[RMDB]
RNA sequence: GGGAACGACUCGAGUAGAGUCGAAAAAUCUUCAAGAAGUGUUUUCUAGCAAAUAUAGACCUUUAUAAUGCCUACGGACAGGCGGGUCGAAUGCCGAAGCGUGGUUAAAAGCCACAUUAUUGAUUGACCUGUAGGCACAGUUCGCUGUGUCUACAGGAAAAGAAACAACAACAACAAC
Reactivity to DMS in 0.01 (KOAc 150mM, MgCl2 10mM, bicine 150mM(pH8.5), 24C), signal-to-noise 5, nucleotides 027 to 126: a070u020c010u000u010c090a110a060g020a110a090g020u010g020u010u000u010u010c040u010a130g010c110a080a050a100u080a100u040a100g000a010c020c000u000u020u020a060u050a120a080u050g010c000c000u000a100c090g000g010a050c110a070g000g020c010g010g010g010u000c010g020a060a060u020g000c010c020g010a230a100g000c160g020u000g000g000u000u010a090a020a080a180g000c000c000a010c020a050u020u010a040u010u020g000a130u010u010g000a300
Reactivity to 2A3 in 0.01 (KOAc 150mM, MgCl2 10mM, bicine 150mM(pH8.5), 24C), signal-to-noise 8, nucleotides 027 to 126: a000u040c030u180u120c060a090a060g110a090a040g110u060g090u150u070u070u040c080u130a040g060c070a040a150a020u200a040u050a120g010a010c000c000u050u230u100a230u130a200a170u300g000c000c010u030a090c040g070g050a050c080a020g000g010c000g000g010g000u000c010g010a060a020u060g020c010c010g050a060a020g110c070g070u000g010g020u040u060a050a090a030a000g010c000c000a010c010a030u080u130a110u080u130g120a110u010u050g050a040